An RNA of 177 nucleotides, treated with 2A3 and DMS and read out base by base.
2A3 adducts were read by reverse transcription with SuperScript II with manganese.
It was measured as part of the RMDB library OK2TST.

RNA sequence: GGGAACGACUCGAGUAGAGUCGAAAAGAGCGAGGUGGGAUUGUACGAGAGUCCGGCUCGAACCGUGAGUGCGUGGGUUAGGCCCGUCCUCGGUUGGCACAACGGGGCGCCUACAGUGGUCCAACAGGUUCUGCUCUAGAUUCGUCUAGAGCAGAACAAAAGAAACAACAACAACAAC
Reactivity to 2A3 in 0.01 (KOAc 150mM, MgCl2 10mM, bicine 150mM(pH8.5), 24C), signal-to-noise 1, nucleotides 027 to 126: g040a030g020c030g000a020g080g000u040g010g040g040a080u070u070g050u080a050c090g030a030g010a010g150u000c040c030g020g000c000u000c070g000a010a010c050c000g010u050g040a060g070u170g050c070g050u180g000g060g000u120u080a080g100g120c000c050c000g050u020c000c000u000c000g060g010u060u080g030g000c020a000c000a160a050c030g000g000g010g000c040g000c040c000u010a020c020a100g020u080g030g090u050c040c010a020a010c000a120g170
Reactivity to DMS in 0.01 (KOAc 150mM, MgCl2 10mM, bicine 150mM(pH8.5), 24C), signal-to-noise 2, nucleotides 027 to 126: g010a110g010c080g020a070g020g030u000g000g010g020a130u000u010g020u010a080c110g000a140g000a080g010u000c030c050g010g000c020u010c040g000a040a080c060c060g010u010g010a060g020u010g020c050g010u020g010g010g000u010u010a110g010g020c030c040c020g010u010c040c000u000c010g010g020u000u000g010g000c090a050c100a080a100c100g010g010g000g030c090g000c020c000u020a060c120a110g020u000g010g020u020c010c040a080a090c190a140g000

Conditions: 150 mM KOAc, 10 mM MgCl2 and 150 mM bicine (pH 8.5), 24 C.